[RMDB]
RNA sequence: GGGAACGACUCGAGUAGAGUCGAAAAGAUAUGGAGAUGAAGCUGCCUAAGACAGAGUUUCGGAAACGAAACUUCGAGGAACUACAGCGUAGUCUCCUAAGUCAAAACACUGCGUUCGCGCAGUGAACUGUGCCUUGAUGUUCGCAUCAAGGCACAGAAAAGAAACAACAACAACAAC
Reactivity to 2A3 in 0.01 (KOAc 150mM, MgCl2 10mM, bicine 150mM(pH8.5), 24C), signal-to-noise 1, nucleotides 027 to 126: g010a010u040a060u230g000g000a000g030a000u070g190a060a180g010c000u020g040c040c020u120a230a040g090a030c060a040g070a030g040u000u000u000c010g040g020a040a060a010c000g100a000a040a000c020u040u080c080g020a080g060g020a100a140c150u300a110c230a010g000c000g040u020a000g000u040c000u000c010c000u010a020a000g000u000c000a050a000a050a050c000a000c010u000g000c010g000u000u080c300g020c010g000c120a040g000u020g010a040a030
Reactivity to DMS in 0.01 (KOAc 150mM, MgCl2 10mM, bicine 150mM(pH8.5), 24C), signal-to-noise 1, nucleotides 027 to 126: g000a000u000a300u000g000g000a060g020a000u000g000a060a300g040c000u000g000c060c000u000a120a160g010a140c300a130g000a000g010u000u000u000c000g000g000a080a080a090c000g010a000a000a000c000u000u000c020g000a050g020g000a040a130c160u000a260c000a010g000c040g000u000a300g020u000c000u000c000c000u000a040a140g000u000c040a000a010a210a110c000a000c000u000g000c000g020u000u000c230g000c000g000c000a000g000u000g000a070a160